[RMDB]
RNA sequence: GGGAACGACUCGAGUAGAGUCGAAAACAAAAAGGUUAACGAGCGUAAUCUGGGAGAUGUAAAAGGAGUUGACAUCUCCUAGAACACCGAAAGGUGGCGGAACGUUAACCGCAUCUUUCGAAAGAAAAGGGUAGGAGGUAUUCGUACCUCCUACCCUAAAAGAAACAACAACAACAAC
Reactivity to DMS in 0.01 (KOAc 150mM, MgCl2 10mM, bicine 150mM(pH8.5), 24C), signal-to-noise 1, nucleotides 027 to 126: c160a120a150a100a110a020g020g000u000u020a000a010c020g010a070g000c050g030u000a050a190u010c000u020g000g020g000a000g000a040u000g010u010a040a000a080a110g030g000a290g000u000u000g000a030c000a000u000c000u050c000c000u000a000g050a000a300c010a000c000c070g000a020a040a040g000g040u000g000g000c020g020g000a070a110c020g020u000u050a020a010c000c000g160c300a000u000c090u000u000u070c020g000a040a130a040g000a000a000a000

About this RNA
An RNA of 177 nucleotides, treated with DMS and read out base by base. For DMS the reverse transcriptase was MarathonRT.